Annotation: Structure probing data (DMS and 2A3) for a 177-nucleotide construct. The 2A3 profile rests on 1,965 reads. Reactivities are given for positions 27 through 126. DMS adducts were read by reverse transcription with MarathonRT.
RNA sequence: GGGAACGACUCGAGUAGAGUCGAAAAAGCUCUGCGGGGAGCGACGGAACCAGAACAUCGUUCUGGAGGCGUCGUCGUAUAAGCCGCAGCGGAUACGACACCUCGGCGAGAUAUGGGGAGCGGAGGGAUACGCAUCCGGAUUCGUCCGGAUGCGUAUAAAAGAAACAACAACAACAAC
Reactivity to DMS in 0.01 (KOAc 150mM, MgCl2 10mM, bicine 150mM(pH8.5), 24C), signal-to-noise 3, nucleotides 027 to 126: a130g010c060u030c020u010g000c010g000g000g000g000a130g010c010g000a020c000g050g020a140a040c000c000a020g020a000a010c030a260u010c300g040u000u000c000u000g000g000a030g030g010c090g020u010c020g000u000c060g040u010a050u030a100a140g000c000c040g010c050a020g000c100g000g000a000u000a020c070g000a090c120a110c040c010u000c040g000g020c000g000a150g010a130u050a070u040g030g010g020g010a300g010c070g010g030a090g010g000g010
Reactivity to 2A3 in 0.01 (KOAc 150mM, MgCl2 10mM, bicine 150mM(pH8.5), 24C), signal-to-noise 4, nucleotides 027 to 126: a000g070c020u040c010u010g000c030g000g010g000g040a110g040c000g000a010c000g010g020a040a030c000c000a000g020a000a010c040a260u300c200g010u010u000c000u000g010g020a050g080g120c010g020u070c000g010u000c000g000u080a210u060a130a040g080c010c020g000c030a000g010c030g000g020a040u070a160c090g010a010c000a030c010c010u020c010g140g000c010g020a080g020a060u150a140u250g060g000g000g040a030g020c040g020g030a040g030g020g010